[RMDB]
RNA sequence: GGGAACGACUCGAGUAGAGUCGAAAAUCUAUGAAGCCGCUUGUAUCAUCAUCAACUGCUGUUGAAUACCUUGUAAAUUCAACAAAUUCAGGUAGCUACGCCUUUGUUAUGUUCACAUCGGCAGUAACAGUAUCAUGCCUUUCGAGGCAUGAUACUGAAAAGAAACAACAACAACAAC
Reactivity to DMS in 0.01 (KOAc 150mM, MgCl2 10mM, bicine 150mM(pH8.5), 24C), signal-to-noise 2, nucleotides 027 to 126: u010c050u030a140u000g010a060a180g000c000c020g020c070u010u000g000u000a050u000c070a010u010c060a020u020c070a090a070c070u000g000c090u040g020u000u020g000a030a080u000a070c030c090u000u020g010u000a060a120a020u010u040c190a080a120c250a080a140a070u040u000c060a090g000g000u000a010g010c040u030a030c040g020c020c030u000u050u000g000u000u000a020u030g000u010u000c080a050c100a040u000c060g000g000c000a090g030u040a040a110
Reactivity to 2A3 in 0.01 (KOAc 150mM, MgCl2 10mM, bicine 150mM(pH8.5), 24C), signal-to-noise 4, nucleotides 027 to 126: u060c020u020a140u210g140a130a010g000c000c000g050c110u000u020g030u060a030u020c020a000u000c000a010u000c000a040a060c030u050g010c020u050g080u040u000g060a160a120u030a030c010c020u090u070g070u180a060a080a110u140u130c050a020a040c010a040a150a020u110u100c010a010g040g040u060a030g000c040u020a010c040g020c000c000u010u010u020g030u030u060a070u090g040u030u040c020a010c010a100u000c050g030g020c040a050g010u080a100a040